[RMDB]
RNA sequence: GGGAACGACUCGAGUAGAGUCGAAAAUAGACGACCUUGCAGCAGCGGGUGCGCGUGCAGAGAAGGCCACUGACAAGCUUUCUAAGACUACUACUGAUUGGGCUGCUGAGCAGCAGAAGGCCAAUGCUCGCGCGAGCGAGAUGGAGCAUGCGGAUGCUCAUUGUCCUCAGUUCGCUGAGGACAAUGAAAAAGAAACAACAACAACAAC
Reactivity to DMS in 0.01 (KOAc 150mM, MgCl2 10mM, bicine 150mM(pH8.5), 24C), signal-to-noise 1, nucleotides 027 to 156: u000a170g010a070c020g030a050c000c060u010u010g010c030a130g000c090a100g000c040g060g000g040u000g000c020g020c010g000u000g060c080a160g000a140g000a080a110g000g030c020c020a180c030u000g020a140c220a080a120g020c010u000u020u010c020u020a090a120g010a140c020u010a120c010u000a100c030u020g010a230u000u000g010g000g000c060u010g010c010u000g010a100g020c040a060g060c070a110g010a070a070g010g000c000c020a080a070u000g000c010u000c020g000c000g000c170g000a120g030c030g000a050g000a090u000g020g010a010g060c040a050u000g010c060g000g000a120u010g030c050
Reactivity to 2A3 in 0.01 (KOAc 150mM, MgCl2 10mM, bicine 150mM(pH8.5), 24C), signal-to-noise 2, nucleotides 027 to 156: u080a000g090a030c040g010a040c000c020u010u070g000c050a120g010c010a010g000c010g030g010g000u070g040c050g000c000g000u040g000c080a020g030a000g050a300a030g040g000c010c020a040c080u050g050a030c040a040a160g010c040u020u110u080c060u080a150a070g020a060c020u050a040c000u010a030c050u200g040a140u080u080g050g030g000c010u010g060c080u070g010a030g020c020a000g000c010a010g040a180a060g040g020c000c030a010a010u150g020c000u000c020g000c020g000c010g000a010g000c010g010a020g010a030u100g040g010a030g080c010a020u060g050c060g020g030a110u170g030c010
Chemical mapping of a 207-nucleotide RNA with DMS and 2A3. For DMS, 2,064 sequencing reads were counted. The RNA was probed in 150 mM KOAc, 10 mM MgCl2 and 150 mM bicine (pH 8.5) at 24 C. 2A3 adducts were read by reverse transcription with SuperScript II with manganese.